[RMDB]
RNA sequence: GGGAACGACUCGAGUAGAGUCGAAAACUCGAAAGAGACCUGCAUAUCUUAGGCAGAUGAUCAAGUCGCGUCUGAAAAGCGAAAGCCCUAAGAUAUGCAGCUGUGAGGACUUGUCGCAGAAAAUAAAGAUAUACCAGGUAUUCGUACCUGGUAUAUCAAAAGAAACAACAACAACAAC
Reactivity to DMS in 0.01 (KOAc 150mM, MgCl2 10mM, bicine 150mM(pH8.5), 24C), signal-to-noise 6, nucleotides 027 to 126: c000u000c010g000a080a090a120g000a050g000a150c300c000u000g010c000a010u000a000u000c000u000u000a000g000g000c010a010g000a000u000g000a040u030c030a010a010g000u000c020g010c000g010u000c000u010g030a190a080a110a160g010c000g000a100a080a130g020c010c000c000u000a010a010g000a000u000a000u000g000c000a000g000c010u000g010u010g000a020g030g010a030c000u000u000g010u000c000g000c000a050g000a190a070a070a060u040a070a120a110
Reactivity to 2A3 in 0.01 (KOAc 150mM, MgCl2 10mM, bicine 150mM(pH8.5), 24C), signal-to-noise 3, nucleotides 027 to 126: c000u000c000g020a030a040a010g070a010g020a060c010c000u010g000c000a000u000a000u000c000u000u000a000g000g010c000a000g000a010u010g010a010u080c020a000a010g020u010c010g010c000g040u000c000u020g130a270a240a130a020g020c010g050a060a030a010g010c010c000c000u000a000a000g000a000u000a000u000g000c000a000g000c000u000g000u010g010a030g000g060a010c000u000u010g000u010c000g000c020a010g110a020a070a020a020u300a030a110a020